[RMDB]
Description
Source: RMDB library OK3TST, as collected in RNAgym. An RNA of 207 nucleotides, treated with DMS and 2A3 and read out base by base. The RNA was probed in 150 mM KOAc, 10 mM MgCl2 and 150 mM bicine (pH 8.5) at 24 C. The 2A3 profile rests on 6,610 reads.

RNA sequence: GGGAACGACUCGAGUAGAGUCGAAAAGUCUAGUGGAAGAUGAAGAGUCUGACUAUGCAACACGACCUCACUUGAUCAUGUUUCUUAUGAUGUCGAUUCAGAACCCACUGAAGGAAGGAGUGCAAUGUCGCAUUAGGAUAGCUUCAAAACUCGCGAAGAAUCAGAUUAUCUUCGGAUAAUCUGAUUCAAAAGAAACAACAACAACAAC
Reactivity to DMS in 0.01 (KOAc 150mM, MgCl2 10mM, bicine 150mM(pH8.5), 24C), signal-to-noise 4, nucleotides 027 to 156: g030u010c040u000a100g050u010g020g020a120a070g010a180u010g020a100a080g020a290g010u000c020u010g020a200c120u010a050u000g000c030a050a060c040a080c020g020a090c040c010u000c070a120c120u000u000g030a070u000c030a060u000g030u000u000u000c060u000u010a080u010g010a070u000g000u010c040g010a160u000u000c020a150g010a080a160c080c030c020a110c060u010g010a060a070g010g000a110a050g010g010a110g010u000g010c050a050a110u010g010u000c040g010c030a080u000u000a180g030g000a100u000a110g020c050u000u000c060a050a080a060a100c050u000c040g000c080g010a130a160
Reactivity to 2A3 in 0.01 (KOAc 150mM, MgCl2 10mM, bicine 150mM(pH8.5), 24C), signal-to-noise 7, nucleotides 027 to 156: g040u020c040u060a010g020u020g070g070a090a070g040a150u070g010a030a020g030a020g040u000c030u030g020a060c050u070a040u110g030c030a060a030c020a020c080g070a100c010c020u020c020a110c040u060u100g030a050u060c040a050u090g110u080u150u020c040u070u160a070u080g070a050u060g070u110c050g060a070u050u000c000a010g050a120a080c010c010c030a050c040u030g010a020a010g040g020a040a030g030g020a020g010u070g020c040a060a110u070g030u040c020g000c040a050u050u070a020g010g030a020u030a080g010c000u000u010c010a010a050a070a080c020u030c040g030c020g030a120a080